[RMDB]
RNA sequence: GGGAACGACUCGAGUAGAGUCGAAAAGCUGACGGAUAACGUGGUGUUAUAGAUAUAUAUGUUACGUCAUAAUAAUAUAAUAGCUCGAGAAAUAUAUAUAUCGUAGCUAAAUUUUUAUCGUCAGCGACCCACUAAUAGUAUUCGUACUAUUAGUGGGAAAAGAAACAACAACAACAAC
Reactivity to 2A3 in 0.01 (KOAc 150mM, MgCl2 10mM, bicine 150mM(pH8.5), 24C), signal-to-noise 3, nucleotides 027 to 126: g000c000u010g000a000c070g250g030a020u000a020a000c020g020u020g040g100u050g010u050u020a050u100a270g000a020u010a000u010a000u000a000u040g010u000u040a020c020g020u000c040a000u080a240a050u110a050a060u150a040u070a300a230u110a140g040c040u020c130g080a130g050a100a080a000u050a020u000a010u000a000u000a000u030c000g000u010a000g000c000u010a040a050a040u090u090u020u010u020a020u020c010g000u020c000a000g000c000g010a010
Reactivity to DMS in 0.01 (KOAc 150mM, MgCl2 10mM, bicine 150mM(pH8.5), 24C), signal-to-noise 2, nucleotides 027 to 126: g020c000u010g000a010c000g010g020a040u000a000a020c300g010u000g000g020u000g000u000u000a020u000a090g000a030u010a000u010a030u000a020u000g000u000u000a090c000g000u000c000a070u020a110a060u010a140a110u000a150u020a090a140u000a130g000c150u010c070g010a230g010a130a030a030u000a010u000a020u010a030u000a010u000c010g010u010a010g000c000u000a130a090a010u000u000u040u000u000a020u010c000g010u000c000a000g010c000g000a140